[RMDB]
RNA sequence: GGGAACGACUCGAGUAGAGUCGAAAAUGCUUAUGCACCAACAUAUGUUAGUGUUGAUGACAAGUAUAAGACGAGUGAUGAGCUUUGCGUGAAUCUUAAUUUACCCGCAAAUGUCCCAUACUCUCGUAGAGCAGGCCGUUCGCGGCCUGCAAAAGAAACAACAACAACAAC
Reactivity to DMS in 0.01 (KOAc 150mM, MgCl2 10mM, bicine 150mM(pH8.5), 24C), signal-to-noise 3, nucleotides 027 to 129: u020g000c040u010u030a000u030g030c000a070c040c030a010a040c000a030u020a080u090g030u000u000a090g030u000g000u040u000g000a130u070g010a100c020a090a180g010u030a040u020a090a070g020a050c030g050a040g000u050g030a010u030g030a130g000c010u000u000u050g020c010g000u020g020a010a000u010c130u020u080a040a260u110u000u000a110c170c100c040g050c020a000a000a000u060g010u090c000c000c000a010u000a110c060u040c010u000c020g020u000a080g020a070
Reactivity to 2A3 in 0.01 (KOAc 150mM, MgCl2 10mM, bicine 150mM(pH8.5), 24C), signal-to-noise 3, nucleotides 027 to 129: u050g000c010u050u050a100u300g000c010a010c060c000a000a030c030a000u130a000u280g210u280u230a100g040u000g000u000u000g000a050u000g000a080c030a120a060g010u000a020u000a120a070g050a000c010g010a000g000u020g020a000u000g000a020g000c000u000u000u000g020c000g000u120g040a040a030u080c060u050u090a090a130u050u100u230a080c030c000c000g030c000a030a030a040u130g130u220c000c010c000a000u080a220c000u000c000u000c000g000u000a000g000a020
Chemical mapping of a 170-nucleotide RNA with DMS and 2A3. Reactivities are rounded to 0.1 and cut off at 0 and 3. The 2A3 profile rests on 2,771 reads. Values cover nucleotides 27 to 129. 2A3 adducts were read by reverse transcription with SuperScript II with manganese. For DMS the reverse transcriptase was MarathonRT.